This 177-nucleotide RNA was probed chemically with 2A3 and DMS. DMS adducts were read by reverse transcription with MarathonRT. It was measured as part of the RMDB library OK2TRN. The reactions ran in a buffer of 150 mM KOAc, 10 mM MgCl2 and 150 mM bicine (pH 8.5), at 24 C. The DMS profile rests on 1,145 reads.
RNA sequence: GGGAACGACUCGAGUAGAGUCGAAAACUGCCCGGUAUGAUCACCAGCAUCAUCGAGGCCAUCGUUUCGCUCAUUCCCAUGAUCGUGCAGGCAGGCGUUCAGCUGCUCACCGCGCUGGUGCAGAACCGUAACUGAUAGCCUUCGGGCUAUCAGUUACAAAAGAAACAACAACAACAAC
Reactivity to 2A3 in 0.01 (KOAc 150mM, MgCl2 10mM, bicine 150mM(pH8.5), 24C), signal-to-noise 1, nucleotides 027 to 126: c020u050g050c010c020c030g050g060u100a020u050g050a110u070c010a010c040c000a010g050c000a000u050c020a020u070c110g100a070g020g000c050c030a060u000c070g030u020u050u050c100g040c020u030c020a100u040u030c010c000c020a030u080g030a030u050c060g030u050g040c020a020g040g000c040a020g030g060c010g020u080u090c030a060g040c010u090g000c010u020c050a110c070c020g010c000g040c050u080g040g020u020g000c000a020g030a090a040c000c050
Reactivity to DMS in 0.01 (KOAc 150mM, MgCl2 10mM, bicine 150mM(pH8.5), 24C), signal-to-noise 2, nucleotides 027 to 126: c080u000g000c010c040c010g040g000u000a030u000g000a060u010c050a060c150c000a080g000c010a120u010c070a050u010c060g010a070g000g050c000c120a060u000c090g000u000u000u000c040g050c080u010c060a130u000u000c010c010c020a130u000g020a020u000c040g030u010g020c100a080g020g030c080a060g000g020c120g020u020u000c070a160g020c010u000g000c050u000c130a100c060c130g010c090g000c010u000g010g030u000g010c050a070g010a120a090c160c080